This 177-nucleotide RNA was probed chemically with DMS and 2A3. The data come from the RNA Mapping Database (RMDB), library OK1LIB. For DMS the reverse transcriptase was MarathonRT. The reactions ran in a buffer of 150 mM KOAc, 10 mM MgCl2 and 150 mM bicine (pH 8.5), at 24 C.

RNA sequence: GGGAACGACUCGAGUAGAGUCGAAAACGCUCUAGCGGGCGGGUAUGCCAGGCGGUCAUCUCCUCGAGAACGCGGUCGGUGAUCCGGCUAACGGUGUCCUUGGACACCGCCGCGUCGUAGAUGUGGGGUACGAGGAUAAUUUCGAUUAUCCUCGUACAAAAGAAACAACAACAACAAC
Reactivity to DMS in 0.01 (KOAc 150mM, MgCl2 10mM, bicine 150mM(pH8.5), 24C), signal-to-noise 6, nucleotides 027 to 126: c070g000c020u010c020u010a110g020c150g000g010g010c040g010g000g020u020a040u020g000c020c020a080g010g010c050g000g010u010c040a070u020c020u000c010c010u000c050g000a130g000a120a030c010g010c010g000g010u030c020g010g000u010g020a130u040c010c000g000g000c090u010a070a090c130g020g000u000g000u010c010c060u040u030g000g010a030c000a000c010c010g010c010c000g010c010g010u000c020g010u020a120g000a050u010g020u020g000g000g010
Reactivity to 2A3 in 0.01 (KOAc 150mM, MgCl2 10mM, bicine 150mM(pH8.5), 24C), signal-to-noise 9, nucleotides 027 to 126: c020g010c010u030c020u050a030g060c070g020g020g000c020g010g030g060u100a050u130g040c020c020a040g060g060c030g020g020u040c010a060u010c020u010c010c010u030c010g080a110g020a080a020c010g010c020g010g040u270c090g010g000u030g020a240u010c010c010g010g000c030u060a120a030c100g090g030u070g030u110c020c010u100u260g030g000a000c000a000c000c000g000c000c000g000c000g000u000c000g000u020a020g010a080u070g040u090g040g050g030